Conditions: 150 mM KOAc, 10 mM MgCl2 and 150 mM bicine (pH 8.5), 24 C. Chemical mapping of a 177-nucleotide RNA with 2A3 and DMS. 2A3 adducts were read by reverse transcription with SuperScript II with manganese. As a SHAPE reagent, 2A3 marks flexible, mostly unpaired nucleotides at the ribose 2'-OH.
RNA sequence: GGGAACGACUCGAGUAGAGUCGAAAACACAAACUUGCACUUACAAAGAGGAAAAUAGAACUUUUAUGGAAUGCUCAAAUGGGUAUUUCUAUGAGUAUCAGCAAACUUUCCAGUCAGGAACUGAUGAGACCUCAUCUAAGUUCGCUUAGAUGAGGUCAAAAGAAACAACAACAACAAC
Reactivity to 2A3 in 0.01 (KOAc 150mM, MgCl2 10mM, bicine 150mM(pH8.5), 24C), signal-to-noise 1, nucleotides 027 to 126: c050a000c030a080a080a000c060u030u090g000c030a000c000u030u110a100c170a060a150a010g070a180g060g060a050a000a030a000u080a040g030a040a020c010u100u070u060u020a070u110g000g040a000a000u010g000c000u000c060a280a300a300u270g000g000g040u000a020u000u000u020c040u020a030u020g010a000g020u020a130u120c020a000g030c090a080a020a020c040u030u060u000c020c020a020g020u010c010a010g070g030a080a120c050u080g000a030u080g020a050
Reactivity to DMS in 0.01 (KOAc 150mM, MgCl2 10mM, bicine 150mM(pH8.5), 24C), signal-to-noise 2, nucleotides 027 to 126: c060a110c110a060a070a140c040u000u020g000c090a070c080u000u020a120c110a030a110a080g000a090g000g010a030a060a050a120u020a110g010a070a060c010u000u030u000u020a030u020g000g000a020a000u000g000c020u000c000a110a070a120u010g050g020g010u010a000u000u000u000c000u000a080u000g010a010g020u000a090u000c020a100g000c110a050a060a080c150u010u000u000c030c030a100g010u020c130a040g010g000a050a080c090u010g060a070u000g000a150

Source information:
Values cover nucleotides 27 to 126. The 2A3 profile rests on 1,030 reads. DMS adducts were read by reverse transcription with MarathonRT.